[RMDB]
RNA sequence: GGGAACGACUCGAGUAGAGUCGAAAAAGUAGCAGUCAAAAAUUUGUAUCCAUUUUUCCUGAUAUUAUGCAUGGAUCAGGUAUAUCAUGGCGAAUUCUUCAGAAAAAAUUGUGUCUUCCACAAUGGAUGUAGUACGUAAGUUCGCUUACGUACUACAAAAAGAAACAACAACAACAAC
Reactivity to 2A3 in 0.01 (KOAc 150mM, MgCl2 10mM, bicine 150mM(pH8.5), 24C), signal-to-noise 8, nucleotides 027 to 126: a000g120u120a020g020c080a020g050u130c090a060a040a050a080a080u060u110u140g050u090a130u050c000c030a040u030u030u010u020u010c010c000u010g010a010u010a080u180u220a100u200g150c100a070u120g070g030a010u010c010a010g020g040u040a100u040a000u080c050a010u040g030g000c020g030a040a020u070u010c040u090u100c090a060g200a080a090a030a020a020a040u050u030g030u000g030u050c050u120u020c050c010a040c020a050a070u070g000g020a010
Reactivity to DMS in 0.01 (KOAc 150mM, MgCl2 10mM, bicine 150mM(pH8.5), 24C), signal-to-noise 4, nucleotides 027 to 126: a090g000u020a080g020c050a060g010u040c080a020a040a090a030a110u010u010u000g010u010a100u020c000c010a040u000u000u000u000u000c020c000u000g000a030u010a050u010u010a080u040g000c160a060u000g000g020a020u000c010a040g000g030u010a030u040a020u000c090a000u010g010g010c040g000a040a060u000u000c070u000u010c090a130g030a000a020a040a080a060a050u030u000g030u000g000u010c110u010u020c090c010a040c060a030a060u020g010g030a210